[RMDB]
RNA sequence: GGGAACGACUCGAGUAGAGUCGAAAAGACGCGAGAGACGCGAGACGCGCAAUGGUAGAAGCCGCAAUAGAUGAUACGAAGGAAGAGGCAAGACGGAGAGCGCGCAACUAUCUCGAAUAACCAAGAAGAUCCCUAAUCACUUCGGUGAUUAGGGAUCAAAAGAAACAACAACAACAAC
Reactivity to 2A3 in 0.01 (KOAc 150mM, MgCl2 10mM, bicine 150mM(pH8.5), 24C), signal-to-noise 2, nucleotides 027 to 126: g040a000c020g000c000g010a000g000a000g010a080c120g000c000g050a040g050a110c000g020c000g000c030a080a050u030g080g000u080a040g110a140a000g000c000c000g060c130a140a030u070a090g160a100u080g010a000u130a090c060g040a120a000g150g000a040a000g000a020g050g010c040a040a000g040a060c050g040g000a020g020a000g040c010g000c000g000c000a010a040c060u050a040u060c000u000c000g000a060a080u050a100a000c030c030a030a000g000a030a060
Reactivity to DMS in 0.01 (KOAc 150mM, MgCl2 10mM, bicine 150mM(pH8.5), 24C), signal-to-noise 3, nucleotides 027 to 126: g000a150c300g000c000g030a200g000a030g000a070c210g010c160g000a180g000a200c060g000c020g050c010a110a130u000g010g020u020a080g020a050a100g000c000c030g000c130a100a040u040a070g000a070u010g000a170u000a100c240g050a080a030g000g000a010a120g000a150g000g000c040a000a120g000a010c020g000g030a120g000a280g000c070g000c050g010c020a100a120c070u000a230u050c020u000c040g020a010a090u010a120a270c040c070a020a040g000a100a070